[RMDB]
RNA sequence: GGGAACGACUCGAGUAGAGUCGAAAAUUUCCUCGUAAAUCCAGCAGCAAACUUAUAGUUGCCAACGAAGACAACUUCGCUGUAGCCGCUUAAGGCUUAAGCCUCGAAACUGCUUGUGUCCGUGCUCGCAGCGUAGAGUCAUCAUCACGGAACCGCUGCCUAUCUUUCUGUUCGCAGAAAGAUAGGCAAAAGAAACAACAACAACAAC
Reactivity to 2A3 in 0.01 (KOAc 150mM, MgCl2 10mM, bicine 150mM(pH8.5), 24C), signal-to-noise 2, nucleotides 027 to 156: u000u010u000c000c000u000c010g030u070a060a100a050u070c050c030a030g070c010a000g020c050a140a110a070c000u060u080a080u060a210g020u020u020g000c010c000a020a030c050g030a010a000g040a030c030a130a130c080u050u080c040g000c020u020g020u070a010g010c000c000g050c080u140u090a140a000g000g000c000u020u070a040a030g000c000c000u030c030g050a040a050a020c010u010g020c000u030u010g040u000g010u020c000c000g000u010g000c000u000c010g000c000a010g000c000g010u010a000g010a010g030u050c040a060u050c010a000u130c000a020c020g020g010a030a000c030c070g020c030u030
The record gives the reactivity of an RNA of 207 nucleotides to 2A3. The RNA was probed in 150 mM KOAc, 10 mM MgCl2 and 150 mM bicine (pH 8.5) at 24 C. For 2A3, 981 sequencing reads were counted. Reactivities are given for positions 27 through 156.